[RMDB]
RNA sequence: GGGAACGACUCGAGUAGAGUCGAAAAUUCGCCAGCUACAGCAGCUCUGAUAUCAAAACGGAUUAUCAAAGCAAAGGUAAAGUGGAUAGCCAUUCAUUCGGUGCCUACGCACAAUACCUGGCUAACACCGUACUAUACGCUUCGGCGUAUAGUACGGAAAAGAAACAACAACAACAAC
Reactivity to DMS in 0.01 (KOAc 150mM, MgCl2 10mM, bicine 150mM(pH8.5), 24C), signal-to-noise 2, nucleotides 027 to 126: u000u020c040g010c040c020a120g000c100u000a100c130a080g000c150a220g020c010u000c030u000g020a020u010a040u000c000a010a070a110a160c290g000g000a020u000u000a020u000c040a030a000a020g000c020a050a100a090g010g020u000a020a070a190g010u000g010g000a080u010a020g000c090c000a020u000u000c140a080u000u030c140g040g030u000g010c200c030u000a050c150g010c000a020c010a050a160u000a060c090c050u000g000g000c040u000a060a130c150a060
Reactivity to 2A3 in 0.01 (KOAc 150mM, MgCl2 10mM, bicine 150mM(pH8.5), 24C), signal-to-noise 3, nucleotides 027 to 126: u040u020c030g100c040c020a030g010c040u090a040c030a090g060c020a000g000c010u000c030u040g010a000u040a000u050c030a020a130a080a240c070g120g010a020u120u070a010u130c050a000a040a030g030c030a230a050a010g050g010u100a090a060a010g050u000g070g090a070u060a010g040c050c010a040u120u100c040a080u180u110c140g040g000u010g000c010c030u070a050c080g000c020a020c040a050a030u060a060c000c000u000g010g000c020u020a060a030c040a030